Structure probing data (DMS and 2A3) for a 177-nucleotide construct.
[RMDB]
RNA sequence: GGGAACGACUCGAGUAGAGUCGAAAAGUGGCUAAUCUCAUGAAAAUGGGGUGAUGCCUAUGGUUUUGGUUUCUACUCCAAGAAAGGAAUAGCAUGACUGAUUAUGAAAUGCUAAUGAUUGUUCUUAAUUUACCGGUUACUUCGGUAACCGGUAAAUAAAAGAAACAACAACAACAAC
Reactivity to DMS in 0.01 (KOAc 150mM, MgCl2 10mM, bicine 150mM(pH8.5), 24C), signal-to-noise 2, nucleotides 027 to 126: g010u010g000g010c000u000a130a020u000c000u010c010a000u000g000a050a030a120a010u000g010g000g000g000u010g000a100u030g000c000c000u010a070u030g010g000u000u000u010u000g010g010u000u020u000c000u000a020c060u000c020c150a080a070g010a100a110a120g020g030a090a120u080a040g000c030a020u000g000a300c040u000g020a100u030u060a050u020g000a070a140a000u000g000c020u000a040a090u000g000a130u000u010g010u000u000c000u000u000a090
Reactivity to 2A3 in 0.01 (KOAc 150mM, MgCl2 10mM, bicine 150mM(pH8.5), 24C), signal-to-noise 2, nucleotides 027 to 126: g040u040g040g000c030u000a000a010u010c000u010c000a000u030g060a040a100a050a020u000g000g000g050g000u000g020a020u280g000c000c000u010a070u040g090g000u000u000u070u120g070g000u000u270u000c000u000a030c000u000c020c000a050a030g140a160a060a000g240g040a160a130u030a020g000c000a000u010g000a100c060u040g080a280u200u110a100u120g030a020a070a000u010g000c010u020a040a040u170g090a110u050u020g000u050u000c000u000u000a020